The record gives the reactivity of an RNA of 207 nucleotides to 2A3. Reactivities are given for positions 27 through 156. 2A3 adducts were read by reverse transcription with SuperScript II with manganese. The data come from the RNA Mapping Database (RMDB), library OK3TST. The 2A3 profile rests on 335 reads. The reactions ran in a buffer of 150 mM KOAc, 10 mM MgCl2 and 150 mM bicine (pH 8.5), at 24 C.

RNA sequence: GGGAACGACUCGAGUAGAGUCGAAAACUGGGUGGGCUCUGAUCCUAUUUGUAGGGCGGGCUAAGUCCUUGUUCCACUCCUUCUUGCAGUGGAUCUUGCCGCUUCUCUGAAAAUGAUUGAAAUGCCCACAGCACUUGCAGAGCAAGCAGAAAAGACACCCAGUAAAUCAGUUCGCUGAUUUACUGGGAAAAGAAACAACAACAACAAC
Reactivity to 2A3 in 0.01 (KOAc 150mM, MgCl2 10mM, bicine 150mM(pH8.5), 24C), signal-to-noise 1, nucleotides 027 to 156: c030u000g020g230g050u170g020g040g000c000u110c220u180g080a040u090c010c030u080a200u130u100u090g070u120a120g020g030g070c090g020g030g090c090u040a120a030g000u020c020c040u040u070g040u020u030c050c000a020c000u020c020c020u170u210c030u190u130g040c090a000g000u020g000g000a010u020c010u040u100g070c030c040g050c070u250u160c040u000c000u010g020a070a030a050a080u110g000a030u000u070g030a030a030a070u150g000c010c000c100a080c010a010g040c000a030c020u020u050g010c020a020g030a020g180c000a010a010g000c000a030g120a090a180a000a000g010a010c040a000